An RNA of 177 nucleotides, treated with 2A3 and DMS and read out base by base. The reactions ran in a buffer of 150 mM KOAc, 10 mM MgCl2 and 150 mM bicine (pH 8.5), at 24 C. For DMS, 26,510 sequencing reads were counted. Source: RMDB library OK1LIB, as collected in RNAgym. The 2A3 profile rests on 11,534 reads. DMS adducts were read by reverse transcription with MarathonRT.

RNA sequence: GGGAACGACUCGAGUAGAGUCGAAAAGGUGUGUAUCGCACGGUUCGACCAGUGGGAGAAGGCUCAGGUCGAUUGCUCUAUUGGUUUGGGCUGUGUCCUGGUUGCGCGCUGAGGGUAUAACCAUUGGCUAAAUAUUAAAAUUCGUUUUAAUAUUUAGAAAAGAAACAACAACAACAAC
Reactivity to 2A3 in 0.01 (KOAc 150mM, MgCl2 10mM, bicine 150mM(pH8.5), 24C), signal-to-noise 6, nucleotides 027 to 126: g040g000u020g000u010g010u040a040u070c040g010c030a010c020g010g040u050u030c010g010a010c010c000a020g030u060g040g060g010a060g020a090a020g030g000c010u010c030a030g050g020u020c000g010a050u010u070g020c010u010c010u040a020u010u020g020g000u010u030u120g020g000g000c010u000g020u020g030u040c000c010u030g020g010u050u030g010c020g000c010g000c040u030g020a070g030g060g000u050a040u020a060a030c010c010a040u030u070g040g000
Reactivity to DMS in 0.01 (KOAc 150mM, MgCl2 10mM, bicine 150mM(pH8.5), 24C), signal-to-noise 6, nucleotides 027 to 126: g010g010u000g010u010g000u010a030u020c070g000c020a050c030g010g010u000u000c030g000a040c010c020a030g020u010g000g010g000a050g000a140a120g000g000c010u000c110a070g010g020u010c010g010a070u020u030g000c060u010c070u010a040u000u000g000g000u000u020u020g010g000g000c000u000g010u010g010u010c060c030u000g010g000u010u010g020c090g010c050g000c030u010g010a080g010g010g010u000a060u020a090a100c040c010a100u010u010g000g010